The record gives the reactivity of an RNA of 177 nucleotides to DMS and 2A3. The RNA was probed in 150 mM KOAc, 10 mM MgCl2 and 150 mM bicine (pH 8.5) at 24 C. For 2A3 the reverse transcriptase was SuperScript II with manganese.

RNA sequence: GGGAACGACUCGAGUAGAGUCGAAAAGCAACAAUCUGUUUUUAACAAGAAAGAUAUUGAAAAUAAAUACAAGAAGCAAGCUACUUUGAAGCAAACAGGGGAAAUUGUGUCUAAUGGCCAUCAAAAACUAAUAGUCUAAGUUCGCUUAGACUAUUAGAAAAGAAACAACAACAACAAC
Reactivity to DMS in 0.01 (KOAc 150mM, MgCl2 10mM, bicine 150mM(pH8.5), 24C), signal-to-noise 3, nucleotides 027 to 126: g000c030a030a130c090a070a070u020c030u000g000u020u000u020u040u030a110a140c080a070a060g000a130a070a110g000a130u040a080u020u010g000a030a050a040a120u020a060a040a100u040a090c120a080a070g010a070a070g050c080a020a110g010c040u010a040c060u010u010u010g000a040a130g000c110a060a040a000c080a010g000g000g020g000a030a100a060u000u000g000u000g000u000c040u000a080a110u020g000g020c050c040a060u000c080a040a050a010a100a050
Reactivity to 2A3 in 0.01 (KOAc 150mM, MgCl2 10mM, bicine 150mM(pH8.5), 24C), signal-to-noise 4, nucleotides 027 to 126: g030c040a030a050c010a020a030u050c000u010g090u020u040u020u060u130a100a030c050a030a050g150a170a110a030g050a070u160a070u150u130g060a060a050a020a000u230a090a070a010u120a030c030a120a050g070a040a000g060c080a040a020g040c020u040a030c010u130u100u280g050a070a020g010c090a030a020a040c040a080g000g000g030g080a030a090a000u080u030g070u010g010u030c000u050a060a080u090g050g000c020c000a030u080c050a050a070a030a000a020